Conditions: 150 mM KOAc, 10 mM MgCl2 and 150 mM bicine (pH 8.5), 24 C. Structure probing data (DMS and 2A3) for a 177-nucleotide construct. 2A3 adducts were read by reverse transcription with SuperScript II with manganese. Source: RMDB library OK2TST, as collected in RNAgym. For 2A3, 4,705 sequencing reads were counted.
RNA sequence: GGGAACGACUCGAGUAGAGUCGAAAAGCGUCCACCCCGCGUCGCAGGUCCUCCUGGGCGAGGGGGUGCGGCGUGGCCACCAGGAGGGCACCGGUGAGCGGCAGGAGCUGGCUCGCGCUGAGCUGCACAGACAGUACGGAUUCGUCCGUACUGUCUGAAAAGAAACAACAACAACAAC
Reactivity to DMS in 0.01 (KOAc 150mM, MgCl2 10mM, bicine 150mM(pH8.5), 24C), signal-to-noise 3, nucleotides 027 to 126: g000c020g020u000c000c010a020c000c010c000c000g010c030g000u000c010g000c010a020g000g010u020c200c300u010c000c010u000g010g000g020c030g020a060g020g010g010g000g030u010g010c190g030g000c010g000u000g010g000c070c030a130c070c060a070g000g000a080g000g010g000c020a040c050c030g030g010u010g010a070g020c040g010g020c040a120g000g000a120g020c020u000g010g020c030u000c050g000c100g010c090u010g000a110g020c040u000g010c090a230
Reactivity to 2A3 in 0.01 (KOAc 150mM, MgCl2 10mM, bicine 150mM(pH8.5), 24C), signal-to-noise 2, nucleotides 027 to 126: g000c010g020u020c000c000a000c020c020c010c000g010c020g040u040c060g020c140a030g000g050u130c040c060u180c000c000u060g000g030g000c030g010a100g050g000g000g020g040u010g020c150g010g000c010g030u050g000g010c020c010a070c010c020a050g060g000a040g010g060g030c050a030c030c040g040g010u040g020a020g020c000g030g000c030a010g050g170a110g030c020u040g150g030c010u040c040g010c010g020c060u090g010a030g020c010u040g030c050a030